An RNA of 177 nucleotides, treated with 2A3 and DMS and read out base by base. The reactions ran in a buffer of 150 mM KOAc, 10 mM MgCl2 and 150 mM bicine (pH 8.5), at 24 C.
[RMDB]
RNA sequence: GGGAACGACUCGAGUAGAGUCGAAAAUGUGAAAUGACUUGAGAGGUGUAGGAUAAGUGGGAGCCCUCGGGCGCAAGUGAAAUACCACUACUUUUAACGUUAUUUUACUUAUUCCGUGGGUCGGAAGUACAAAGACGAUUUUCGAAUCGUCUUUGUAAAAAGAAACAACAACAACAAC
Reactivity to 2A3 in 0.01 (KOAc 150mM, MgCl2 10mM, bicine 150mM(pH8.5), 24C), signal-to-noise 5, nucleotides 027 to 126: u150g020u000g050a030a010a050u090g010a030c020u040u040g020a010g010a010g080g030u080g030u160a070g070g100a050u050a130a080g040u080g020g050g000a040g000c000c000c000u030c020g010g010g010c050g000c070a030a020g030u030g060a020a050a020u050a050c010c060a020c010u070a080c030u080u110u020u100a090a020c080g010u000u000a000u000u020u000u000a000c000u030u040a070u120u010c010c020g020u120g010g020g040u080c040g020g020a040a030g050
Reactivity to DMS in 0.01 (KOAc 150mM, MgCl2 10mM, bicine 150mM(pH8.5), 24C), signal-to-noise 7, nucleotides 027 to 126: u010g020u020g000a040a050a050u010g000a040c030u010u010g010a060g000a040g010g010u010g010u010a040g000g010a080u010a030a050g020u000g010g000g010a110g010c010c000c010u010c190g000g010g020c090g020c210a050a090g000u000g000a020a010a070u000a060c040c040a070c080u020a060c110u010u020u010u020a050a090c160g010u000u000a010u000u000u000u000a010c010u000u000a170u010u010c000c000g020u010g000g000g010u000c050g010g000a060a100g010